Structure probing data (DMS and 2A3) for a 177-nucleotide construct. For 2A3 the reverse transcriptase was SuperScript II with manganese. Conditions: 150 mM KOAc, 10 mM MgCl2 and 150 mM bicine (pH 8.5), 24 C. The DMS profile rests on 1,356 reads. For DMS the reverse transcriptase was MarathonRT.

RNA sequence: GGGAACGACUCGAGUAGAGUCGAAAAAUUCAGAUAGGGGAGUUCUUGCUCCGAAUAAUGAGAUUUAUAUUGCCAAUAACACUUUGGAAAUCGGAAUGAAACCGUUUGAAUAUAAGGUCAAGAGCUAACGUGCUACUCAUUUCGAUGAGUAGCACGUAAAAGAAACAACAACAACAAC
Reactivity to DMS in 0.01 (KOAc 150mM, MgCl2 10mM, bicine 150mM(pH8.5), 24C), signal-to-noise 1, nucleotides 027 to 126: a080u020u060c010a060g000a020u020a140g030g020g020g000a220g030u000u000c030u000u020g000c090u000c000c070g010a040a010u020a030a060u030g030a140g030a030u060u020u060a080u060a050u000u020g000c050c070a120a050u060a020a170c100a040c160u010u050u000g000g000a000a060a050u000c000g000g000a060a130u000g000a060a220a090c020c000g020u010u000u060g000a030a030u000a010u060a200a130g040g000u000c060a110a060g000a070g000c000u030a130
Reactivity to 2A3 in 0.01 (KOAc 150mM, MgCl2 10mM, bicine 150mM(pH8.5), 24C), signal-to-noise 1, nucleotides 027 to 126: a000u130u050c000a000g070a070u130a290g000g010g000g040a000g000u000u000c020u000u070g000c040u000c020c000g010a040a060u180a100a000u080g050a000g040a000u000u060u060a140u030a000u000u220g070c000c020a070a050u180a040a070c130a000c080u020u180u060g000g020a010a010a010u000c000g000g000a000a160u100g050a110a160a000c000c000g100u050u030u000g080a080a080u220a020u020a110a020g000g010u020c040a100a000g030a010g020c000u000a120